[RMDB]
RNA sequence: GGGAACGACUCGAGUAGAGUCGAAAAAGGAAGAAGCGGAGACAGCGACGAAGAGCUCAUCAGAACAGUCAGACUCAUCAAGCUUCUCUAUCAAAGCAGUAAGUAGUACAUGUAAUGCAACCUAUACAUGUGUCUUAGCUUUCGAGCUAAGACACAUAAAAGAAACAACAACAACAAC
Reactivity to DMS in 0.01 (KOAc 150mM, MgCl2 10mM, bicine 150mM(pH8.5), 24C), signal-to-noise 2, nucleotides 027 to 126: a040g030g000a010a080g000a050a040g010c120g000g020a030g050a080c090a030g020c040g000a110c120g010a020a070g030a080g000c100u030c100a040u000c080a140g000a080a030c140a070g000u020c080a040g010a260c030u030c000a040u000c050a210a260g010c000u020u000c010u030c100u000a010u030c020a040a080a100g000c020a180g030u020a020a050g000u010a200g010u050a050c020a090u000g000u000a040a070u000g020c050a060a090c070c020u030a100u010a030c220
Reactivity to 2A3 in 0.01 (KOAc 150mM, MgCl2 10mM, bicine 150mM(pH8.5), 24C), signal-to-noise 3, nucleotides 027 to 126: a000g190g030a110a020g030a030a020g040c020g040g030a010g000a000c060a050g000c010g010a000c040g060a060a060g010a010g030c020u010c050a210u080c030a040g130a070a080c050a060g070u070c000a050g030a070c010u040c020a070u040c010a010a110g000c000u020u010c000u000c000u010a080u090c030a070a080a030g000c020a000g060u140a150a000g010u110a020g040u040a100c010a080u110g050u160a100a070u060g000c000a040a070c020c010u020a020u030a080c060
The record gives the reactivity of an RNA of 177 nucleotides to DMS and 2A3. The RNA was probed in 150 mM KOAc, 10 mM MgCl2 and 150 mM bicine (pH 8.5) at 24 C. 2A3 adducts were read by reverse transcription with SuperScript II with manganese. The 2A3 profile rests on 1,796 reads. The data come from the RNA Mapping Database (RMDB), library OK1LIB.